[RMDB]
RNA sequence: GGGAACGACUCGAGUAGAGUCGAAAAACUCAACUUCCAAAUGGCAGGAAGAGAUUUGGAAAAAGUUUAGUUGGAGGGGAGAUUAACUUAAAAGGAGUGUCUUCAAAGGCUGGGUGCGAUGCCCUGCGAUAAAGCCCGUAUUCGUACGGGCUUUAUCAAAAGAAACAACAACAACAAC
Reactivity to DMS in 0.01 (KOAc 150mM, MgCl2 10mM, bicine 150mM(pH8.5), 24C), signal-to-noise 1, nucleotides 027 to 126: a060c030u020c020a130a150c090u000u000c000c000a020a030a020u000g010g020c100a100g030g000a160a110g010a160g000a030u010u000u010g020g010a020a070a100a130a090g000u000u000u000a120g010u000u010g020g010a080g020g000g000g060a070g010a090u000u000a050a080c090u000u010a060a080a080a120g020g000a050g000u010g020u010c030u000u000c090a030a120a120g020g010c020u010g040g000g040u000g030c120g000a100u000g020c010c010c010u000g010c110